[RMDB]
RNA sequence: GGGAACGACUCGAGUAGAGUCGAAAACAAUUGAGCGUCGCACACACACAGACUAAGACUGACACUGACAGAGCCUAAACCGCUCUGUCAGUGUGCGAGAUAUCGUUCUUAAUGUGAGCAGAGGAAACGCUUGGAAGUAAUUCGUUACUUCCAAGCGAAAAGAAACAACAACAACAAC
Reactivity to 2A3 in 0.01 (KOAc 150mM, MgCl2 10mM, bicine 150mM(pH8.5), 24C), signal-to-noise 2, nucleotides 027 to 126: c020a030a100u140u180g060a060g050c060g090u060c030g010c020a010c000a000c000a000c000a010c010a080g050a060c030u060a140a010g010a030c020u010g020a000c010a000c010u000g000a000c000a000g000a010g000c000c010u050a060a060a050c010c000g000c000u000c010u000g000u000c000a010g010u000g000u020g000c010g020a040g010a010u100a020u090c060g060u150u020c030u020u110a130a110u100g030u030g040a070g020c060a020g040a030g070g080a090a060a040
Reactivity to DMS in 0.01 (KOAc 150mM, MgCl2 10mM, bicine 150mM(pH8.5), 24C), signal-to-noise 3, nucleotides 027 to 126: c060a080a110u030u000g000a120g000c040g020u000c030g030c030a100c050a070c060a050c060a070c150a040g000a030c070u010a110a100g010a090c090u000g010a040c000a000c000u000g000a010c000a010g000a000g010c000c040u000a050a070a130c300c300g000c000u010c000u000g000u000c010a000g010u000g010u000g000c020g000a020g020a110u010a120u020c050g000u000u000c000u010u010a090a080u010g020u000g000a070g020c030a080g000a070g010g000a070a060a140